[RMDB]
RNA sequence: GGGAACGACUCGAGUAGAGUCGAAAACUUCGGUUCACUCCCGCUGGCGCUGCGGUCGCGAACUUCACGAUCGCGUCCACGCCCCGCGUGUUCGACCGGGACGCGAACGAGUGGAAAGACGGCGAAGAGCCAGUGAGACGUUCGCGUCUCACUGGCUAAAAGAAACAACAACAACAAC
Reactivity to 2A3 in 0.01 (KOAc 150mM, MgCl2 10mM, bicine 150mM(pH8.5), 24C), signal-to-noise 1, nucleotides 027 to 126: c010u070u050c040g070g000u060u020c010a000c020u040c030c040c010g030c040u040g020g030c090g000c060u140g010c040g040g000u110c020g040c020g000a050a030c050u190u130c120a040c070g050a060u010c010g010c000g000u000c030c000a060c040g050c000c020c020c010g000c020g030u070g090u080u080c040g060a140c030c000g050g000g000a000c020g020c010g020a000a040c030g020a030g040u140g000g120a020a090a080g030a060c050g020g060c010g030a060a050g020
Reactivity to DMS in 0.01 (KOAc 150mM, MgCl2 10mM, bicine 150mM(pH8.5), 24C), signal-to-noise 1, nucleotides 027 to 126: c060u000u020c080g030g000u010u000c130a140c100u000c030c000c000g030c070u010g010g020c090g050c040u020g030c030g000g020u010c030g020c030g000a050a090c160u010u000c130a140c010g000a060u000c000g010c020g000u000c020c030a020c070g010c010c000c010c090g000c090g010u000g000u000u020c080g000a070c100c050g000g000g000a000c020g020c000g010a020a040c050g000a180g020u000g000g000a110a150a140g010a090c060g000g030c040g010a140a060g000

Description: The record gives the reactivity of an RNA of 177 nucleotides to 2A3 and DMS. The 2A3 profile rests on 893 reads. For 2A3 the reverse transcriptase was SuperScript II with manganese. Values cover nucleotides 27 to 126. For DMS, 1,168 sequencing reads were counted. DMS adducts were read by reverse transcription with MarathonRT.